[RMDB]
RNA sequence: GGGAACGACUCGAGUAGAGUCGAAAAACGCGGAGUACGCUCCGCGACAACACUUCUUUCGACCCGCUAACCGAGACCUAUGGGUCGUUAAAUUACGUCUCUAUCUUACUCACAAAACAUCGCACAAAAAACGUGGUUCGGUUCGCCGAACCACGAAGUUUUCAGAUUUCUUCGGAAAUCUGAAAACAAAAGAAACAACAACAACAAC
Reactivity to 2A3 in 0.01 (KOAc 150mM, MgCl2 10mM, bicine 150mM(pH8.5), 24C), signal-to-noise 1, nucleotides 027 to 156: a000c000g000c000g040g000a000g000u030a030c110g000c070u050c000c010g000c020g010a000c000a020a020c040a000c020u090u130c010u060u250u200c000g030a000c000c000c000g030c200u220a040a030c080c020g010a030g010a000c010c010u010a070u300g050g000g000u000c010g050u000u030a000a000a010u100u040a010c010g000u000c000u000c000u010a190u100c140u100u180a110c050u090c060a070c060a090a110a120a030c050a150u120c160g040c190a060c100a100a040a020a090a030a000c050g000u000g000g010u000u000c030g000g070u070u100c180g010c030c070g010a010a000c010c000a000c000g000a000a000